[RMDB]
RNA sequence: GGGAACGACUCGAGUAGAGUCGAAAAAACAACAUCUCACGACACGAGCUGACGACAACCAUGCACCACCUGUCACUUUGUCCCCGAAGGGAAAGCUCUGUCUCCAGAGUGGUCAAAGGAUGUCAAAGUAGUACGGACCAUUCGUGGUCCGUACUACAAAAGAAACAACAACAACAAC
Reactivity to DMS in 0.01 (KOAc 150mM, MgCl2 10mM, bicine 150mM(pH8.5), 24C), signal-to-noise 1, nucleotides 027 to 126: a090a020c030a100a040c060a050u000c000u000c010a090c080g010a020c030a030c060g000a080g020c060u010g080a170c050g030a070c110a040a100c030c050a180u000g010c040a100c000c010a010c010c010u000g010u000c040a140c040u000u000u000g020u000c030c010c010c150g030a090a090g010g020g000a050a050a100g030c020u000c090u000g010u000c040u010c120c000a100g000a130g040u000g050g000u000c010a040a070a060g020g010a070u020g000u020c050a100a050a230
Reactivity to 2A3 in 0.01 (KOAc 150mM, MgCl2 10mM, bicine 150mM(pH8.5), 24C), signal-to-noise 1, nucleotides 027 to 126: a010a000c130a090a000c090a130u000c040u040c060a070c080g070a030c020a020c080g010a010g000c000u010g030a010c030g030a010c010a040a000c040c000a060u080g060c030a000c000c010a020c030c000u060g040u060c020a040c160u120u180u030g050u160c000c000c000c000g110a060a040g050g000g030a040a040a000g020c030u010c070u110g070u050c040u000c000c030a010g090a010g110u010g000g000u000c000a000a040a150g070g010a040u000g010u000c000a000a000a090
This 177-nucleotide RNA was probed chemically with DMS and 2A3. High DMS reactivity at an A or C suggests that its Watson-Crick edge is free. Source: RMDB library OK2TST, as collected in RNAgym.